[RMDB]
RNA sequence: GGGAACGACUCGAGUAGAGUCGAAAAGAAAGAAAUCACUAAUCGGAUCAAAGCGGAUUGAUGUAACUGAGCAAUGAGUAUCUACGAAUAACUCGUAGUGAGUGAUCCAAUAUCCGUAUUAGAGAAAGGGUAUGUUUGUGUUCGCACAAACAUACCCAAAAGAAACAACAACAACAAC
Reactivity to DMS in 0.01 (KOAc 150mM, MgCl2 10mM, bicine 150mM(pH8.5), 24C), signal-to-noise 2, nucleotides 027 to 126: g000a180a080a090g000a010a090a020u000c110a140c010u000a010a000u000c040g020g000a000u030c230a180a060a110g000c300g050g000a000u000u000g000a040u020g000u020a100a060c030u010g000a110g000c140a080a050u010g000a140g030u000a010u020c030u050a000c090g020a000a120u000a030a130c180u000c020g050u010a010g000u000g030a050g020u000g000a040u000c000c000a090a190u000a060u000c010c000g030u080a010u000u000a010g000a110g000a000a030a050
Reactivity to 2A3 in 0.01 (KOAc 150mM, MgCl2 10mM, bicine 150mM(pH8.5), 24C), signal-to-noise 2, nucleotides 027 to 126: g100a030a080a000g070a020a080a030u120c030a050c070u000a010a010u000c000g050g000a000u050c170a070a000a050g080c090g090g000a000u010u010g060a000u080g050u170a030a150c050u020g040a040g020c140a090a180u110g010a030g000u080a050u010c000u000a010c020g020a090a030u060a210a030c020u000c010g020u050a030g010u050g000a020g030u150g020a000u000c000c000a000a000u130a060u080c000c000g050u240a010u070u020a010g020a000g030a070a140a020

Conditions: 150 mM KOAc, 10 mM MgCl2 and 150 mM bicine (pH 8.5), 24 C. This 177-nucleotide RNA was probed chemically with DMS and 2A3. The 2A3 profile rests on 1,787 reads.